[RMDB]
RNA sequence: GGGAACGACUCGAGUAGAGUCGAAAAGGUCUCAGCUGGGGCUGUGCAUCAGGCGGUUUGAGAAAUAUUCAAUUCUCAGCAGAAGCCAGAAUUUGAAUUCCCUCAUCUUUUAGGAAUCAUUUACCAGUGACUGCUCUUGAUUCGUCAAGAGCAGUCAAAAAGAAACAACAACAACAAC
Reactivity to 2A3 in 0.01 (KOAc 150mM, MgCl2 10mM, bicine 150mM(pH8.5), 24C), signal-to-noise 2, nucleotides 027 to 126: g000g020u000c000u000c010a050g040c020u040g000g060g010g000c010u080g000u160g030c010a100u010c060a100g000g090c020g000g040u090u080u160g000a000g000a000a020a010u160a010u040u040c010a050a090u030u010c010u020c000a000g000c000a000g030a120a000g000c000c000a010g110a060a020u100u020u070g000a050a020u010u050c000c020c000u050c010a190u120c000u050u190u140u100a030g060g020a040a030u100c010a070u010u090u240a010c030c050a000g060
Reactivity to DMS in 0.01 (KOAc 150mM, MgCl2 10mM, bicine 150mM(pH8.5), 24C), signal-to-noise 2, nucleotides 027 to 126: g000g020u020c030u000c030a070g010c050u020g000g020g010g020c010u000g030u000g020c060a140u020c000a050g060g000c040g040g010u000u000u000g000a000g040a010a040a200u060a050u060u020c280a060a010u000u000c000u000c080a060g020c030a100g010a130a230g000c010c090a060g050a050a010u000u060u000g000a060a160u000u000c020c000c000u010c090a120u000c010u010u010u060u010a050g000g000a040a150u020c270a120u010u030u000a030c040c040a130g080
This 177-nucleotide RNA was probed chemically with 2A3 and DMS. 2A3 adducts were read by reverse transcription with SuperScript II with manganese. For 2A3, 600 sequencing reads were counted. As a SHAPE reagent, 2A3 marks flexible, mostly unpaired nucleotides at the ribose 2'-OH. DMS adducts were read by reverse transcription with MarathonRT.